This 177-nucleotide RNA was probed chemically with 2A3 and DMS. It was measured as part of the RMDB library OK2TRN. The 2A3 profile rests on 1,265 reads. Values cover nucleotides 27 to 126. The reactions ran in a buffer of 150 mM KOAc, 10 mM MgCl2 and 150 mM bicine (pH 8.5), at 24 C.

[RMDB]
RNA sequence: GGGAACGACUCGAGUAGAGUCGAAAAGAAAGGCAGCCAUUGCAGCCCACGAAGCCAUUCGACGCAUGCUUUUGCAUGCCGCCCACGACUGAGGGCAGCUGCGGCACUGAGGGCAGCUGCCGAAAGAGACGGUCAUACCGUUCGCGGUAUGACCGUCAAAAGAAACAACAACAACAAC
Reactivity to 2A3 in 0.01 (KOAc 150mM, MgCl2 10mM, bicine 150mM(pH8.5), 24C), signal-to-noise 1, nucleotides 027 to 126: g070a050a040a030g030g000c020a030g030c030c070a130u090u220g060c040a070g060c000c000c000a030c000g070a090a000g020c010c020a040u110u060c000g030a020c060g000c000a050u020g000c000u180u250u170u300g020c030a020u050g000c000c010g020c000c020c000a090c050g280a050c100u110g070a090g000g000g050c000a000g020c010u020g000c090g040g000c030a010c170u160g050a200g050g040g000c000a010g060c000u000g000c000c020g000a000a000a000g060a000
Reactivity to DMS in 0.01 (KOAc 150mM, MgCl2 10mM, bicine 150mM(pH8.5), 24C), signal-to-noise 1, nucleotides 027 to 126: g000a070a210a130g020g040c030a060g040c040c180a060u000u000g000c090a020g020c030c020c000a210c120g030a090a010g000c020c040a070u000u010c070g030a140c160g000c020a050u000g000c020u000u010u000u010g010c010a000u000g010c010c080g010c000c000c070a140c190g000a070c100u040g000a180g000g000g000c030a050g010c030u000g000c040g000g010c080a070c160u000g020a100g030g010g000c000a040g010c010u010g000c000c030g000a030a030a050g000a270